[RMDB]
RNA sequence: GGGAACGACUCGAGUAGAGUCGAAAAAUGAACUAAUGUUGGUAUGUGAAAAAGUGAGAGUUCAAUUUUUCAACAGUUAGUUCCUACACGUAAUAGGAAUAGUAGACUCAGUUCACUAACCUGAAAAUAUAAGUCAAAUGCUCCUGCCAACCCUAGAGAUUUACGCACGAUUCGUCGUGCGUAAAUCAAAAGAAACAACAACAACAAC
Reactivity to 2A3 in 0.01 (KOAc 150mM, MgCl2 10mM, bicine 150mM(pH8.5), 24C), signal-to-noise 2, nucleotides 027 to 156: a000u090g010a000a000c010u040a060a130u100g020u060u040g010g020u120a220u100g070u030g090a080a040a020a030a100g090u080g030a100g020a040g000u070u040c090a120a170u040u050u000u040u130c090a040a020c010a080g030u070u030a000g010u000u040c000c000u060a050c150a020c060g110u120a030a070u020a130g000g020a020a030u030a030g040u030a040g010a020c040u030c200a050g010u100u030c010a010c070u020a020a040c010c000u020g050a090a110a010a000u140a040u050a100a020g010u040c020a000a110a000u080g050c020u010c010c020u000g040c000c000a070a040c000c000c020u050a040g040a010
Reactivity to DMS in 0.01 (KOAc 150mM, MgCl2 10mM, bicine 150mM(pH8.5), 24C), signal-to-noise 1, nucleotides 027 to 156: a040u000g010a060a080c050u000a020a060u000g030u010u030g010g000u000a030u010g030u020g000a030a060a090a060a100g030u000g040a110g000a150g050u000u010c080a040a070u000u000u000u000u000c000a010a130c060a080g010u000u000a120g010u000u000c030c020u000a050c070a060c300g020u000a160a080u000a020g020g000a080a000u000a100g030u000a130g030a070c000u010c030a060g060u000u000c020a050c010u000a070a180c060c010u000g020a070a020a080a080u000a000u000a060a070g000u000c080a080a030a080u050g010c000u000c010c000u010g000c020c010a050a070c060c000c010u030a070g030a290